RNA sequence: GGGAACGACUCGAGUAGAGUCGAAAAUUGGCCUUUCAAUCCCUUUGUGAAUCACUUUCUCAACAAAUGAAGAGAAUGGCCCAAGUCUUUUAAGACCUUCACCCUCAGGCACAGAUGACUUGUGUGGUAGCUAGUCGGUUUUCGAACCGACUAGCUAAAAAGAAACAACAACAACAAC
Reactivity to DMS in 0.01 (KOAc 150mM, MgCl2 10mM, bicine 150mM(pH8.5), 24C), signal-to-noise 2, nucleotides 027 to 126: u080u010g000g000c010c070u010u040u010c090a110a100u000c020c000c000u010u000u060g000u010g040a090a060u040c240a090c040u000u040u000c060u000c070a020a100c210a090a100a140u030g000a010a060g000a300g000a010a000u000g020g000c030c000c060a070a060g000u000c030u000u000u000u000a020a060g000a260c020c000u000u000c090a070c040c000c000u000c070a040g020g050c020a100c170a090g000a060u000g010a020c000u020u000g030u020g000u020g010g090
Reactivity to 2A3 in 0.01 (KOAc 150mM, MgCl2 10mM, bicine 150mM(pH8.5), 24C), signal-to-noise 2, nucleotides 027 to 126: u020u020g010g000c000c000u030u060u020c080a060a050u020c000c020c070u000u000u060g130u070g060a060a110u130c050a110c020u050u110u010c100u010c090a040a300c040a140a120a100u290g070a030a030g030a000g000a040a040u110g000g060c010c020c000a000a030g040u000c000u000u160u040u150a050a040g000a030c000c000u050u070c040a030c050c030c030u000c110a000g050g060c000a100c000a010g120a130u060g030a090c000u080u000g020u020g040u000g160g110